[RMDB]
RNA sequence: GGGAACGACUCGAGUAGAGUCGAAAACUAUCUUGGCCUUCUCUUCUGUCUGCUAGACCAACACAUUGAUCUCCUAUUGGUAACCCCAACAAUCCUUCAUCUGUAUAUGCAAUUAUACGAUAGCUAGCUUUAGGAUGAAGUUCGCUUCAUCCUAAAGAAAAGAAACAACAACAACAAC
Reactivity to DMS in 0.01 (KOAc 150mM, MgCl2 10mM, bicine 150mM(pH8.5), 24C), signal-to-noise 4, nucleotides 027 to 126: c070u010a050u010c050u010u000g010g020c030c020u000u010c040u000c030u010u000c040u010g000u010c020u010g010c050u000a100g010a080c040c070a030a060c130a060c110a070u000u010g010a100u000c050u000c030c030u010a100u000u000g000g010u010a090a150c050c040c020c030a050a070c130a060a100u000c050c030u000u000c080a030u000c030u020g020u000a010u010a020u000g010c170a070a060u010u000a030u010a010c070g010a080u010a080g020c120u000a080g000
Reactivity to 2A3 in 0.01 (KOAc 150mM, MgCl2 10mM, bicine 150mM(pH8.5), 24C), signal-to-noise 2, nucleotides 027 to 126: c030u020a060u080c020u020u050g030g020c000c000u050u000c000u000c000u070u020c020u060g060u050c010u030g060c010u040a040g030a100c000c020a070a000c020a020c010a080u060u100g070a090u020c030u010c040c010u050a080u050u020g000g020u060a070a100c010c010c010c000a030a000c020a020a070u030c010c040u070u090c020a040u000c030u090g010u010a020u000a010u120g060c060a080a040u090u000a010u060a050c020g040a030u020a050g040c060u000a000g040

The data come from the RNA Mapping Database (RMDB), library RFMREP. This 177-nucleotide RNA was probed chemically with DMS and 2A3. The RNA was probed in 150 mM KOAc, 10 mM MgCl2 and 150 mM bicine (pH 8.5) at 24 C. The 2A3 profile rests on 2,640 reads. DMS adducts were read by reverse transcription with MarathonRT. Values cover nucleotides 27 to 126.